[RMDB]
RNA sequence: GGGAACGACUCGAGUAGAGUCGAAAAGACUGCGUGCACUGGAGACGAUAUCGAGCCGGAAAUUAAUCGAUAAUGUCUCUCGUAGUGGAUACGAUCCGGCAAGUAUCGACUACAUGUGCUCGUAGGACCCGUACUCGGGUUUCGACCCGAGUACGGGAAAAGAAACAACAACAACAAC
Reactivity to 2A3 in 0.01 (KOAc 150mM, MgCl2 10mM, bicine 150mM(pH8.5), 24C), signal-to-noise 1, nucleotides 027 to 126: g070a070c000u020g000c000g000u050g020c000a000c000u020g030g000a000g030a000c030g000a010u000a000u060c010g000a000g000c000c000g040g110a090a040a080u240u230a090a160u150c070g000a030u040a010a180u110g110u040c020u000c010u050c000g010u030a020g050u020g100g020a000u000a020c000g010a040u000c000c000g000g000c030a000a010g000u000a000u000c000g030a000c000u000a000c000a010u160g000u000g000c000u000c000g000u000a000g000g010a000